This 177-nucleotide RNA was probed chemically with DMS and 2A3. Reactivities are rounded to 0.1 and cut off at 0 and 3. 2A3 adducts were read by reverse transcription with SuperScript II with manganese.
[RMDB]
RNA sequence: GGGAACGACUCGAGUAGAGUCGAAAAGAGUGCGGUUGGUGUAGAGUGGAAAGAGCGAUGCGUUUGACGAGCAAGCAAGGAAAAGAACCAUCGCUGGUGUGUUCUUUGCGGGUCACCCGUUGACGUACCAUCCACCUACUUUCGAGUAGGUGGAUGGAAAAGAAACAACAACAACAAC
Reactivity to DMS in 0.01 (KOAc 150mM, MgCl2 10mM, bicine 150mM(pH8.5), 24C), signal-to-noise 3, nucleotides 027 to 126: g010a060g000u010g010c070g010g010u000u010g000g020u010g000u000a050g000a120g000u010g000g010a030a050a070g000a080g010c040g010a060u020g020c110g010u000u010u020g020a070c080g010a110g000c070a100a090g000c040a070a060g000g010a040a090a040a070g020a060a060c010c000a010u030c100g030c140u030g000g030u010g010u070g000u000u010c020u000u010u010g040c020g000g000g000u040c100a100c060c020c040g020u010u000g010a050c130g000u010a160
Reactivity to 2A3 in 0.01 (KOAc 150mM, MgCl2 10mM, bicine 150mM(pH8.5), 24C), signal-to-noise 4, nucleotides 027 to 126: g120a010g030u090g010c030g010g030u020u070g030g060u010g060u060a090g020a070g080u070g020g050a110a060a030g060a030g030c030g040a050u040g050c070g030u040u040u080g070a070c050g040a030g110c030a090a000g040c020a030a070g090g040a080a140a020a050g030a020a010c010c000a010u040c030g040c200u050g000g020u050g010u020g000u000u030c010u020u040u040g000c010g000g000g030u070c040a040c040c010c000g010u000u040g030a020c040g020u050a050